Structure probing data (DMS and 2A3) for a 177-nucleotide construct.

[RMDB]
RNA sequence: GGGAACGACUCGAGUAGAGUCGAAAAGAUAUGGAAUGCUUGUCAGCGUUCUAGUAUGUCGGAAACGACAUAUACUUCUACGCUUGGAUUUAGCAUUCCUAAGUCAAAAUCGGCCUUCGGGCCGAAAGAAAAAGAUUACCUUCGGGUAAUCUUUUUCAAAAGAAACAACAACAACAAC
Reactivity to DMS in 0.01 (KOAc 150mM, MgCl2 10mM, bicine 150mM(pH8.5), 24C), signal-to-noise 2, nucleotides 027 to 126: g000a050u000a300u000g010g000a000a000u000g010c010u010u010g010u010c020a060g030c000g000u000u010c020u010a000g010u000a020u000g010u000c000g000g000a130a090a250c020g000a000c000a020u000a110u000a040c000u000u020c020u000a010c000g020c020u010u000g010g000a010u000u010u000a010g000c010a040u000u000c000c000u000a030a060g020u010c020a080a050a110a110u000c000g010g010c000c000u000u000c160g040g020g010c000c000g000a000a010a060
Reactivity to 2A3 in 0.01 (KOAc 150mM, MgCl2 10mM, bicine 150mM(pH8.5), 24C), signal-to-noise 2, nucleotides 027 to 126: g010a030u080a080u130g020g000a000a020u010g000c000u040u040g020u030c000a000g000c000g020u030u000c020u000a030g020u000a000u010g020u000c000g010g070a090a040a050c040g000a000c000a010u190a020u010a050c010u040u040c000u020a000c010g060c000u100u170g270g010a090u300u300u120a010g000c000a010u000u040c000c000u010a120a000g000u000c000a040a010a050a240u010c000g020g000c020c000u050u150c210g070g030g010c000c010g000a000a000a010
About this RNA
For DMS, 1,620 sequencing reads were counted. Source: RMDB library TTRDEL, as collected in RNAgym.